[RMDB]
Record summary:
Chemical mapping of a 207-nucleotide RNA with 2A3. 2A3 adducts were read by reverse transcription with SuperScript II with manganese. Conditions: 150 mM KOAc, 10 mM MgCl2 and 150 mM bicine (pH 8.5), 24 C. For 2A3, 701 sequencing reads were counted. Source: RMDB library OK3TST, as collected in RNAgym.
RNA sequence: GGGAACGACUCGAGUAGAGUCGAAAAUGUCAUGAAGAUGGUAUACCUCUUUUGUACAUCGACACAGAGAAUUAUACUCAUGAGCAAGAAGACAGGUUGCUUUCAUUGAUAUCUGGUGUUGACCAUACAGAAAUUGAAAAUGGUCAAUUUGCAAAAGCUGUACCGUGAUGUUCGCAUCACGGUACAGAAAAGAAACAACAACAACAAC
Reactivity to 2A3 in 0.01 (KOAc 150mM, MgCl2 10mM, bicine 150mM(pH8.5), 24C), signal-to-noise 2, nucleotides 027 to 156: u060g020u000c010a020u020g010a040a040g140a120u110g070g040u140a090u080a100c000c020u020c030u000u040u010u030g030u090a080c060a190u090c120g040a040c050a020c050a130g050a000g060a060a060u190u070a040u110a170c040u030c050a050u050g020a020g080c000a000a050g040a070a010g070a060c050a060g070g000u020u000g000c030u040u070u000c060a090u070u120g060a050u010a030u180c050u090g120g000u030g080u070u000g010a000c020c030a000u040a060c020a110g270a140a190a050u140u050g090a100a020a100a060u000g000g000u000c000a020a050u040u050u070g080c040a000a000a000a060g080